[RMDB]
RNA sequence: GGGAACGACUCGAGUAGAGUCGAAAAUCUAAACCAAGAAUCUUUCGAGUUGCAGAUUCCAGUGCAGCCUGAAUGGCAAGUAUAAUGACGUCUUUACUAACGCCUCUUUCGUUUGAUAAUGCCUCAAAAAUGGUACCGUAUUCGUACGGUACCAUUUAAAAGAAACAACAACAACAAC
Reactivity to DMS in 0.01 (KOAc 150mM, MgCl2 10mM, bicine 150mM(pH8.5), 24C), signal-to-noise 4, nucleotides 027 to 126: u000c060u000a050a070a130c070c080a120a100g000a070a090u010c050u000u000u010c050g000a070g000u000u000g000c090a080g020a140u000u000c070c060a090g020u000g010c030a060g020c020c010u000g000a050a080u010g010g010c040a050a060g000u010a070u000a050a120u000g010a090c080g010u000c060u000u000u010a060c070u000a070a060c110g010c030c010u000c040u000u010u000c100g010u010u010u000g000a070u000a070a060u000g010c040c010u020c090a050a060
Reactivity to 2A3 in 0.01 (KOAc 150mM, MgCl2 10mM, bicine 150mM(pH8.5), 24C), signal-to-noise 3, nucleotides 027 to 126: u040c030u040a060a020a050c040c030a020a030g060a060a060u050c020u040u110u050c040g040a030g030u000u010g020c000a000g040a300u130u060c020c000a030g100u020g050c020a010g000c000c020u020g100a070a040u080g010g030c030a050a040g060u080a100u040a120a130u130g050a020c030g040u020c040u020u080u060a080c080u050a090a000c030g020c020c000u030c030u010u090u070c020g050u020u050u010g040a020u020a040a070u090g020c010c050u090c020a060a110

The record gives the reactivity of an RNA of 177 nucleotides to DMS and 2A3. The 2A3 profile rests on 2,468 reads.